[RMDB]
RNA sequence: GGGAACGACUCGAGUAGAGUCGAAAACUGCGGUUUCGUAAUGCCGACGCAAUAAAAGGACGGGGAUUGUAUAUGUGUUCCUAUUCAAACAAUGCAAUUCCUAAAUGGUAGAAGAUGUUGCGAAGCCUCGUGACAGCAAGUUCGCUUGCUGUCACGAAAAAGAAACAACAACAACAAC
Reactivity to 2A3 in 0.01 (KOAc 150mM, MgCl2 10mM, bicine 150mM(pH8.5), 24C), signal-to-noise 3, nucleotides 027 to 126: c080u110g020c010g070g000u010u000u000c000g000u000a000a000u040g010c020c000g060a030c010g010c100a090a170u100a210a120a030a030g110g060a060c120g020g000g040g000a040u000u000g010u050a020u020a110u080g030u000g110u060u180c010c050u070a080u070u190c080a020a040a040c000a000a000u000g000c000a000a000u010u000c000c000u010a000a100a050u170g090g000u080a020g010a070a000g030a100u070g050u010u000g000c000g000a000a000g000c010c050
Reactivity to DMS in 0.01 (KOAc 150mM, MgCl2 10mM, bicine 150mM(pH8.5), 24C), signal-to-noise 2, nucleotides 027 to 126: c010u000g050c220g000g030u000u000u020c010g000u000a000a020u000g020c020c030g010a230c040g000c160a050a080u020a070a060a050a110g020g000a080c250g000g040g010g010a010u000u010g000u000a010u000a000u010g030u000g010u020u000c120c120u000a080u040u000c170a070a100a070c040a020a040u000g020c010a000a030u000u000c000c020u010a050a110a070u030g010g010u020a100g010a050a180g000a030u030g020u020u000g000c000g010a020a000g000c010c020
Description:
Chemical mapping of a 177-nucleotide RNA with 2A3 and DMS.